[RMDB]
RNA sequence: GGGAACGACUCGAGUAGAGUCGAAAAGGUGGAAAAGUCAAGCACUCGAUCGGUGUUGCCUGCCGGAUCGCCGAGAAACAUGUUGCGCAGCAUCUGCUCGGUCACCGUUGGCGUGCGCGAAUAUCCGACCAAAAUAGCGGUUCGCCGCUAUUUUGGUAAAAGAAACAACAACAACAAC
Reactivity to DMS in 0.01 (KOAc 150mM, MgCl2 10mM, bicine 150mM(pH8.5), 24C), signal-to-noise 2, nucleotides 027 to 126: g000g020u000g010g000a000a050a100a130g010u000c040a050a300g000c020a030c020u000c030g000a030u000c030g040g010u000g000u000u010g000c040c020u000g020c170c030g000g020a070u000c090g030c010c000g000a070g010a060a070a140c160a050u000g000u010u010g000c090g000c070a110g020c060a050u000c100u010g000c030u000c120g000g010u000c030a040c020c040g020u000u000g000g010c290g020u010g020c010g010c170g020a030a030u010a170u000c030c030g000
Reactivity to 2A3 in 0.01 (KOAc 150mM, MgCl2 10mM, bicine 150mM(pH8.5), 24C), signal-to-noise 1, nucleotides 027 to 126: g070g000u150g030g040a050a030a060a150g060u030c030a040a000g010c000a020c010u040c020g140a070u050c040g040g040u040g030u060u150g070c000c000u050g040c040c040g000g020a020u040c030g000c020c000g070a060g100a060a220a020c100a060u170g090u080u120g020c160g020c040a080g040c030a040u020c020u030g030c000u010c000g000g060u030c030a020c010c010g000u000u060g020g020c040g020u010g020c040g000c020g000a090a020u080a030u040c000c000g000
Annotation
Chemical mapping of a 177-nucleotide RNA with DMS and 2A3. For 2A3 the reverse transcriptase was SuperScript II with manganese. Source: RMDB library OK2TST, as collected in RNAgym.